[RMDB]
RNA sequence: GGGAACGACUCGAGUAGAGUCGAAAACAUGUUGGUCAGGCAGGUCUCGAACUCCCAACCUCAGGUGAUCCUCCCACCUUGGCCUUCCAAAGUGCUGGGAUUAUAGGUAUGAGCCAUCGUGCCCAGCCAGUCUGCUUAGUUUCGACUAAGCAGACUGAAAAGAAACAACAACAACAAC
Reactivity to 2A3 in 0.01 (KOAc 150mM, MgCl2 10mM, bicine 150mM(pH8.5), 24C), signal-to-noise 1, nucleotides 027 to 126: c070a070u210g050u020u080g040g080u040c070a050g020g060c030a030g000g010u000c040u060c080g070a090a060c010u030c040c020c000a030a060c040c050u100c050a040g030g020u040g050a020u010c010c010u020c000c000c000a020c000c000u010u010g050g010c000c000u070u060c020c000a080a000a010g070u060g000c000u020g000g000g000a020u000u060a090u120a100g020g040u120a110u300g070a040g070c000c000a050u060c050g080u030g110c010c000c000a000g000c000
Reactivity to DMS in 0.01 (KOAc 150mM, MgCl2 10mM, bicine 150mM(pH8.5), 24C), signal-to-noise 3, nucleotides 027 to 126: c080a060u010g020u000u000g010g000u010c050a070g010g010c040a080g010g010u000c030u010c050g040a070a100c110u000c000c010c020a080a100c110c040u000c090a050g020g020u000g010a070u000c050c030u000c010c030c020a060c040c030u000u000g000g020c070c030u010u010c030c050a020a040a110g000u000g010c030u000g010g000g010a050u010u000a060u010a050g020g020u000a060u010g020a130g010c030c010a040u000c130g020u000g010c000c000c010a050g000c050
Notes
The record gives the reactivity of an RNA of 177 nucleotides to 2A3 and DMS. DMS adducts were read by reverse transcription with MarathonRT. The DMS profile rests on 3,533 reads. Values cover nucleotides 27 to 126. The RNA was probed in 150 mM KOAc, 10 mM MgCl2 and 150 mM bicine (pH 8.5) at 24 C.